[RMDB]
RNA sequence: GGGAACGACUCGAGUAGAGUCGAAAAAGAAAGACAGCGUAGCACACACACAGACUAAGUCUGACACACACCUACGCUACAUGUGUGUGUGAAGUCGAGAUAUCGACAAGUGUGUGUGAUGAAAAAACUGUCUAGACUGGUUCGCCAGUCUAGACAGAAAAGAAACAACAACAACAAC
Reactivity to DMS in 0.01 (KOAc 150mM, MgCl2 10mM, bicine 150mM(pH8.5), 24C), signal-to-noise 2, nucleotides 027 to 126: a060g000a100a070a070g010a040c060a030g000c070g000u000a010g000c020a010c000a000c000a000c000a020c010a030g020a000c010u000a150a160g040u000c010u000g000a020c000a020c000a030c010a020c010c000u010a010c010g000c160u000a080c130a040u000g000u000g030u000g010u010g010u000g020a030a120g000u010c000g010a030g010a230u010a080u000c010g000a010c010a010a030g000u000g030u010g000u000g010u000g010a100u000g010a000a030a030a070a080a090
Reactivity to 2A3 in 0.01 (KOAc 150mM, MgCl2 10mM, bicine 150mM(pH8.5), 24C), signal-to-noise 1, nucleotides 027 to 126: a010g060a010a030a000g040a050c040a000g040c000g010u000a000g070c010a000c000a000c000a000c000a000c000a000g010a010c010u130a240a040g020u000c020u000g020a000c010a010c000a010c000a010c000c010u020a030c000g030c100u120a050c050a080u070g040u030g000u000g000u000g020u000g020a020a010g000u010c000g040a010g000a090u240a070u120c010g000a040c030a110a090g010u020g000u000g000u000g000u000g000a000u080g000a040a000a000a070a050a030